Source information:
The record gives the reactivity of an RNA of 177 nucleotides to 2A3 and DMS. In probing experiments dimethyl sulfate is read out at A N1 and C N3, which are open when not base-paired. 2A3 adducts were read by reverse transcription with SuperScript II with manganese.

[RMDB]
RNA sequence: GGGAACGACUCGAGUAGAGUCGAAAAGAUAUGGAGAAUUCGUCCAGGGAGUGUUCCCAGUCGGAAACGACUGCACACAUCGAUCUGGACGAGAUUCUCCUAAGUCAAAGUCUGGUUCGCCAGACAAGCUUUACUAGAUGUUCGCAUCUAGUAAAGCAAAAGAAACAACAACAACAAC
Reactivity to 2A3 in 0.01 (KOAc 150mM, MgCl2 10mM, bicine 150mM(pH8.5), 24C), signal-to-noise 4, nucleotides 027 to 126: g040a040u120a060u260g000g000a000g000a000a010u020u010c010g010u000c010c000a010g000g000g020a070g000u010g020u050u060c000c050c000a000g000u010c000g020g030a100a070a090c020g000a000c000u020g060c040a000c000a000c010a200u300c030g050a090u030c010u000g000g000a010c010g000a000g000a000u010u010c000u000c000c000u010a110a010g040u010c070a170a050a030g000u000c000u010g000g050u080u120c300g040c090c000a000g010a000c010a000a020
Reactivity to DMS in 0.01 (KOAc 150mM, MgCl2 10mM, bicine 150mM(pH8.5), 24C), signal-to-noise 5, nucleotides 027 to 126: g000a060u010a300u020g010g000a010g000a040a010u010u000c000g000u010c000c000a020g000g000g000a110g040u000g000u000u000c180c300c010a010g010u000c010g010g000a110a140a230c020g000a010c000u000g060c140a020c040a020c000a270u010c150g010a110u010c000u000g000g010a010c010g000a010g000a020u000u000c000u010c000c000u000a010a030g000u010c060a110a120a180g000u000c000u010g000g000u000u010c300g010c010c010a020g000a010c010a060a120
It was measured as part of the RMDB library TTRDES.